An RNA of 177 nucleotides, treated with 2A3 and DMS and read out base by base. For DMS, 2,165 sequencing reads were counted. For DMS the reverse transcriptase was MarathonRT. 2A3 adducts were read by reverse transcription with SuperScript II with manganese.
RNA sequence: GGGAACGACUCGAGUAGAGUCGAAAAGUACGCCCGCAAAAAGGAACUUGCGCCAUUGCUCGAUCCAAGCCAACCCGGUGGAAGCUACAUCUAUAUUGGACUGGACCAUCCGGCCUGCUGGGCGGAACCGUCAAAUAGGUUUCGACCUAUUUGACGGAAAAGAAACAACAACAACAAC
Reactivity to 2A3 in 0.01 (KOAc 150mM, MgCl2 10mM, bicine 150mM(pH8.5), 24C), signal-to-noise 3, nucleotides 027 to 126: g020u000a030c000g030c000c020c010g000c050a060a080a020a000a030g060g010a050a060c030u020u070g000c060g070c150c120a140u110u300g000c010u020c060g030a050u000c030c010a050a030g020c010c010a040a050c020c020c020g030g000u020g010g030a060a040g070c040u080a070c010a060u050c030u110a140u030a140u270u140g040g020a080c060u040g010g010a060c010c010a070u060c010c000g030g010c000c010u020g020c040u120g000g010g010c000g000g000a010a030
Reactivity to DMS in 0.01 (KOAc 150mM, MgCl2 10mM, bicine 150mM(pH8.5), 24C), signal-to-noise 3, nucleotides 027 to 126: g020u000a130c070g000c020c000c000g030c050a040a040a040a210a080g000g010a060a090c040u000u000g010c040g020c090c160a100u010u000g000c020u000c050g000a080u000c030c020a110a100g030c040c040a060a080c150c070c110g010g030u010g000g000a110a080g000c060u000a050c110a080u000c060u020a110u020a240u020u000g000g000a050c060u000g000g020a080c050c050a090u000c010c030g000g010c220c070u000g000c050u010g030g000g000c010g010g000a070a090